[RMDB]
RNA sequence: GGGAACGACUCGAGUAGAGUCGAAAAGAGAGUGGAACUCAGAUUCGUAAUAGUCAUAAGGAAGGGCUGUCAACAUCCUAAUGAGCUGAACAUAUGCUACUUCCUUCUCUAUAUCUUGACCAGUAAACCACAGUGGAUGGUUCGCCAUCCACUGUGGAAAAGAAACAACAACAACAAC
Reactivity to DMS in 0.01 (KOAc 150mM, MgCl2 10mM, bicine 150mM(pH8.5), 24C), signal-to-noise 1, nucleotides 027 to 126: g000a030g000a030g020u010g020g020a110a160c010u000c070a070g000a150u000u000c080g010u010a100a030u000a060g000u000c070a080u010a050a030g020g000a040a010g010g010g000c020u010g000u000c090a010a030c070a060u000c040c060u020a210a090u010g010a080g010c000u000g000a090a080c120a120u000a120u010g010c020u000a070c030u010u000c000c020u000u000c140u010c020u010a050u000a120u040c030u000u000g000a170c090c050a090g000u010a030a100a140
Reactivity to 2A3 in 0.01 (KOAc 150mM, MgCl2 10mM, bicine 150mM(pH8.5), 24C), signal-to-noise 2, nucleotides 027 to 126: g050a030g000a000g070u190g060g050a010a030c060u100c130a030g060a160u120u050c060g020u070a030a050u020a100g140u100c050a030u010a140a020g060g000a020a020g020g060g000c020u020g040u000c050a040a090c050a140u000c040c050u130a210a040u150g060a030g010c020u040g050a100a000c010a070u220a060u290g040c000u110a300c050u020u030c000c000u040u000c020u030c000u020a000u000a040u050c030u030u130g050a070c000c010a050g080u250a000a090a120
The data come from the RNA Mapping Database (RMDB), library OK2TRN. An RNA of 177 nucleotides, treated with DMS and 2A3 and read out base by base. Reactivities are given for positions 27 through 126. The RNA was probed in 150 mM KOAc, 10 mM MgCl2 and 150 mM bicine (pH 8.5) at 24 C. The 2A3 profile rests on 939 reads.